[RMDB]
Overview
Conditions: 150 mM KOAc, 10 mM MgCl2 and 150 mM bicine (pH 8.5), 24 C. This 170-nucleotide RNA was probed chemically with DMS and 2A3. For 2A3, 4,039 sequencing reads were counted.
RNA sequence: GGGAACGACUCGAGUAGAGUCGAAAAUGCCGAGUGAGGCUUAUCCCGGGGGGUAGCGCUCCGUGCCCUUCCAUAGCACUGGGGUCCCGGGCCCCCUCCCAGGAAUGGGAAUGGGGGGAGAUCGACCGACGGGGACCGUUCGCGGUCCCCAAAAGAAACAACAACAACAAC
Reactivity to DMS in 0.01 (KOAc 150mM, MgCl2 10mM, bicine 150mM(pH8.5), 24C), signal-to-noise 3, nucleotides 027 to 129: u000g000c000c000g010a180g020u120g000a070g050g000c020u000u010a150u030c020c000c020g000g000g000g000g000g000u030a010g020c180g000c060u000c010c030g000u000g000c010c000c000u060u050c080c110a110u220a050g020c050a020c090u170g080g040g010g050u020c010c070c020g070g000g010c000c050c010c020c000u030c020c010c020a060g000g070a300a130u020g040g010g070a210a020u080g010g010g030g010g040g000a080g040a100u020c090g060a000c120c020g030a000c040
Reactivity to 2A3 in 0.01 (KOAc 150mM, MgCl2 10mM, bicine 150mM(pH8.5), 24C), signal-to-noise 2, nucleotides 027 to 129: u140g000c010c010g010a060g100u250g000a070g020g000c080u070u060a130u160c000c000c080g000g010g000g000g000g020u050a040g040c010g000c030u000c020c000g000u010g000c000c040c000u070u110c040c000a050u070a020g000c010a000c110u150g010g010g000g000u010c010c000c000g000g000g000c020c010c000c000c000u010c010c020c000a000g030g150a000a100u020g000g050g000a000a070u060g060g000g000g000g000g000a020g000a060u020c000g030a030c000c000g010a040c000